Overview
Chemical mapping of a 177-nucleotide RNA with 2A3 and DMS. Reactivities are rounded to 0.1 and cut off at 0 and 3. The 2A3 profile rests on 64,673 reads.
[RMDB]
RNA sequence: GGGAACGACUCGAGUAGAGUCGAAAACGACCGAUGGAUCGAGAUAUUCUCGACGGUAUCUUAAGCGGAGGUACGGGAGACUAGCGCGCUACCCGAGCCGAGUAGGCAGGCUUGGCUGAUACUAGGCUCUAGUGAUGCUCUUCGGGGCAUCGCUAGAAAAAGAAACAACAACAACAAC
Reactivity to 2A3 in 0.01 (KOAc 150mM, MgCl2 10mM, bicine 150mM(pH8.5), 24C), signal-to-noise 9, nucleotides 027 to 126: c030g040a030c010c000g030a050u100g080g030a090u030c010g010a010g010a040u100a080u190u090c020u010c010g020a010c020g010g010u030a040u020c030u040u080a050a010g030c000g010g030a020g010g020u030a020c010g000g000g000a040g010a020c020u030a020g010c020g000c010g010c030u050a100c000c000c010g010a000g000c000c000g010a020g010u040a030g050g070c020a010g020g000c000u020u020g010g000c000u010g010a020u010a050c020u010a020g030g000c000
Reactivity to DMS in 0.01 (KOAc 150mM, MgCl2 10mM, bicine 150mM(pH8.5), 24C), signal-to-noise 9, nucleotides 027 to 126: c100g010a100c030c020g010a130u030g000g000a120u010c020g000a030g000a130u030a080u020u010c010u000c020g010a060c060g000g000u000a020u010c040u010u020a080a110g010c060g010g000a090g000g010u010a070c040g000g000g010a100g000a070c070u010a060g000c080g010c060g000c040u000a080c040c010c010g010a080g010c000c000g000a040g010u010a040g010g000c020a070g000g000c080u020u010g000g000c030u000g000a130u010a040c030u010a070g010g010c070

Description:
For DMS, 91,973 sequencing reads were counted. The data come from the RNA Mapping Database (RMDB), library OK1LIB.